[RMDB]
RNA sequence: GGGAACGACUCGAGUAGAGUCGAAAACAAUUUUCAACUUUUCACCUUCCCUUGAAACUUGAAUUUUCCUAGAAUCAAACUACCUCCUAUAAAAUCCAAUCCUCUACUUUACCAAUCCGAAAAUAAAAGGUCAGAUAUAAUUCGUUAUAUCUGACCUAAAAGAAACAACAACAACAAC
Reactivity to DMS in 0.01 (KOAc 150mM, MgCl2 10mM, bicine 150mM(pH8.5), 24C), signal-to-noise 1, nucleotides 027 to 126: c040a050a000u000u000u000u000c050a000a090c050u000u010u010u000c060a100c090c040u000u000c000c050c020u000u000g010a020a010a020c160u000u010g020a060a080u000u000u000u000c020c010u000a090g020a070a140u000c040a050a090a080c010u000a060c000c020u010c020c010u010a050u020a090a120a100a060u030c060c020a020a130u000c020c000u000c020u000a050c020u000u000u000a100c010c020a100a020u030c080c000g000a050a060a060a080u010a090a070a140
An RNA of 177 nucleotides, treated with DMS and read out base by base. Source: RMDB library M2PK90, as collected in RNAgym. The RNA was probed in 150 mM KOAc, 10 mM MgCl2 and 150 mM bicine (pH 8.5) at 24 C.